[RMDB]
RNA sequence: GGGAACGACUCGAGUAGAGUCGAAAAAAGGCACGCGUAGGCCGAGUGUGAGUGGGUGCGCAAGUGGGUGCGCGAAUGCGCGGGGCGUGCGAGGUGAGUGUGUGCGCCCGCCCCUGCGCCCCUCCCCUGACAGUUAUCCCUUCGGGGAUAACUGUCAAAAAGAAACAACAACAACAAC
Reactivity to DMS in 0.01 (KOAc 150mM, MgCl2 10mM, bicine 150mM(pH8.5), 24C), signal-to-noise 1, nucleotides 027 to 126: a050a080g000g000c000a080c030g010c030g000u030a180g020g020c000c080g000a190g000u040g010u000g000a160g030u030g000g020g030u020g000c010g040c000a070a080g000u000g020g020g020u030g030c000g020c010g020a090a060u030g020c000g030c010g040g070g000g000c010g050u010g020c000g000a060g000g000u030g000a130g040u000g020u010g010u000g040c050g000c000c070c110g010c000c000c010c020u010g000c000g000c000c060c020c010u000c000c000c000c150
Reactivity to 2A3 in 0.01 (KOAc 150mM, MgCl2 10mM, bicine 150mM(pH8.5), 24C), signal-to-noise 2, nucleotides 027 to 126: a000a000g080g040c060a040c060g140c090g070u140a060g000g050c010c010g000a030g030u070g010u000g030a050g030u230g040g000g000u150g060c000g000c040a100a200g080u290g070g010g000u070g050c000g000c000g100a130a050u300g000c010g000c000g000g000g000g010c000g000u040g000c000g010a030g080g050u220g120a130g030u260g020u110g000u000g050c000g000c020c000c000g030c050c000c030c000u020g000c000g000c020c020c000c000u000c000c000c020c000